[RMDB]
RNA sequence: GGGAACGACUCGAGUAGAGUCGAAAAAGCGAUGAUACGUCAUCGCAACGAUUGCCUGAUCGUAAAACAGGAGACGGCCGUGGCCGCGACCACGUAAAAAAGCGUAACGUGGUCUACGGACCACGAACGAAGAGCCUUAAUUCGUUAAGGCUCUUCGAAAAGAAACAACAACAACAAC
Reactivity to 2A3 in 0.01 (KOAc 150mM, MgCl2 10mM, bicine 150mM(pH8.5), 24C), signal-to-noise 9, nucleotides 027 to 126: a000g000c010g000a000u010g000a000u020a070c260g090u020c010a000u000c000g000c000a000a020c010g010a020u010u030g020c000c000u020g010a030u020c040g120u200a000a020a020a020c010a010g010g020a020g050a030c110g050g030c030c010g000u000g000g000c020c000g000c000g010a010c000c000a000c020g030u070a020a030a010a040a050a010g110c050g060u050a050a010c000g000u000g000g010u020c010u030a070c130g030g000a020c000c010a000c000g000a020a010
Reactivity to DMS in 0.01 (KOAc 150mM, MgCl2 10mM, bicine 150mM(pH8.5), 24C), signal-to-noise 4, nucleotides 027 to 126: a110g010c010g010a020u000g000a030u000a140c160g000u010c000a010u000c000g040c000a120a180c030g010a000u010u010g000c000c020u000g000a010u010c000g000u030a020a030a020a030c010a010g000g010a010g020a110c140g010g020c130c000g000u000g000g000c050c010g010c300g020a020c000c000a020c000g000u010a000a060a040a070a010a050g000c140g030u050a130a060c010g020u010g010g010u000c000u010a040c080g010g020a090c010c000a000c000g010a090a100